[RMDB]
RNA sequence: GGGAACGACUCGAGUAGAGUCGAAAACAAGAAAGGAAUUAAGCAAGCUUUAUGUAGGACUGAUGGAGCAAGACCCUGAUGUGAAGAGUCCCAGGCAGGAGGCCUGGUGGGGCUUGACCUUUCCUUAGGGAGUGUGUGGGGGAGGAGUCUUCCCAAAGCUCAUCAUACGAUUCGUCGUAUGAUGAGCAAAAGAAACAACAACAACAAC
Reactivity to 2A3 in 0.01 (KOAc 150mM, MgCl2 10mM, bicine 150mM(pH8.5), 24C), signal-to-noise 2, nucleotides 027 to 156: c050a020a020g110a130a040a000g060g030a030a090u100u100a130a030g000c030a040a020g000c020u130u150u020a100u170g120u150a010g010g020a000c040u030g010a070u090g040g000a040g030c060a070a050g040a130c010c000c010u030g040a090u090g020u080g050a050a060g040a010g050u030c000c000c020a020g030g000c000a020g010g230a050g020g100c000c000u040g000g030u040g000g030g000g000c000u030u060g010a060c010c000u040u050u060c000c030u010u090a000g000g060g020a070g040u070g000u010g010u060g020g000g000g000g000a010g010g010a020g010u000c010u010u010c000c010c000a060a030a010